Structure probing data (2A3 and DMS) for a 207-nucleotide construct.
[RMDB]
RNA sequence: GGGAACGACUCGAGUAGAGUCGAAAAUGGAAAUUUUUCUUUCAAUGCUCUAAACCAGUCAUGAAAUACAUAUUUGACACUUGUUGUGCACAACCAGAGAGGUAGUUAAAUACAAGGAGGAACAGAAUGCAGUCUAGAGUAUGACCUUUGCCCUCAAUAAAAUGCUGCAUUUCGAUGCAGCAUUUUAAAAAGAAACAACAACAACAAC
Reactivity to 2A3 in 0.01 (KOAc 150mM, MgCl2 10mM, bicine 150mM(pH8.5), 24C), signal-to-noise 1, nucleotides 027 to 156: u130g010g050a020a090a000u120u120u030u020u030c060u000u040u040c100a030a060u090g030c020u000c000u070a050a100a040c090c000a060g040u070c030a050u100g090a070a160a040u270a020c080a030u110a150u030u100u090g050a040c030a010c060u020u010g030u050u050g010u030g000c100a000c030a110a050c040c030a010g090a000g010a010g150g010u050a010g050u050u090a070a000a000u070a050c040a060a090g070g020a090g020g040a060a010c030a020g040a100a050u070g000c000a000g000u010c010u030a000g010a000g030u050a040u190g050a040c000c030u030u000u050g040c000c010c040u110c030a050a000
Reactivity to DMS in 0.01 (KOAc 150mM, MgCl2 10mM, bicine 150mM(pH8.5), 24C), signal-to-noise 2, nucleotides 027 to 156: u000g000g010a030a040a130u020u000u010u000u000c010u000u010u000c040a110a090u000g020c020u010c020u000a050a060a050c050c020a130g030u010c060a100u000g000a100a050a110u000a070c100a080u000a070u000u030u010g020a050c020a050c050u000u010g040u000u000g040u000g010c090a080c070a080a140c040c040a150g010a160g000a080g060g030u000a080g030u000u000a010a040a090u010a040c050a040a100g000g020a200g010g010a080a100c050a090g010a110a050u000g050c050a050g010u000c070u000a050g000a110g000u000a020u010g020a080c010c030u000u000u000g020c010c050c000u000c010a010a290
Notes
The 2A3 profile rests on 486 reads. The reactions ran in a buffer of 150 mM KOAc, 10 mM MgCl2 and 150 mM bicine (pH 8.5), at 24 C.